[RMDB]
This 207-nucleotide RNA was probed chemically with DMS and 2A3. For DMS, 3,787 sequencing reads were counted. For 2A3 the reverse transcriptase was SuperScript II with manganese. DMS adducts were read by reverse transcription with MarathonRT. Reactivities are rounded to 0.1 and cut off at 0 and 3.
RNA sequence: GGGAACGACUCGAGUAGAGUCGAAAAGCCACGUAUCCCGUGACAUUGCGAAAGCAAGGCUGGCGGUAGGUAGUCCUGGGCGGCGACAGCCUUGGACUGCGGCGUAAAGGUGUACCUGGGGCCGUUAUAACGCGGUAACAGUUCGCUGUUACCGCAAUCCUAUUAGGGACUUCGGUCCCUAAUAGGAAAAAGAAACAACAACAACAAC
Reactivity to DMS in 0.01 (KOAc 150mM, MgCl2 10mM, bicine 150mM(pH8.5), 24C), signal-to-noise 2, nucleotides 027 to 156: g000c000c010a160c060g000u000a150u010c090c050c010g030u000g020a070c030a180u010u000g020c000g020a160a080a250g030c020a010a100g010g020c020u000g030g040c030g010g010u000a050g060g010u000a020g020u000c020c000u000g020g000g020c000g040g040c000g010a140c070a170g010c030c000u020u000g000g000a030c020u010g040c040g000g000c030g010u000a020a100a080g030g040u010g010u000a050c040c020u040g000g000g010g010c030c030g030u000u010a080u010a110a150c130g000c020g020g000u000a010a020c020a020g000u000u010c160g030c020u000g000u000u000a030c000c010g000c000a000a010
Reactivity to 2A3 in 0.01 (KOAc 150mM, MgCl2 10mM, bicine 150mM(pH8.5), 24C), signal-to-noise 1, nucleotides 027 to 156: g040c000c000a020c010g010u080a040u060c000c000c020g030u060g020a040c090a160u040u020g000c020g070a100a050a020g000c020a030a050g030g000c090u100g030g050c000g030g060u020a040g000g110u000a000g000u000c000c000u030g000g040g020c020g000g050c050g080a030c090a030g000c000c010u000u020g020g000a000c020u000g000c010g050g000c000g000u080a130a080a070g030g000u060g040u080a130c020c020u000g000g080g000g000c040c000g020u000u110a200u050a160a020c150g000c000g000g000u000a000a000c010a000g000u000u040c100g060c090u000g000u030u010a000c000c010g000c020a000a000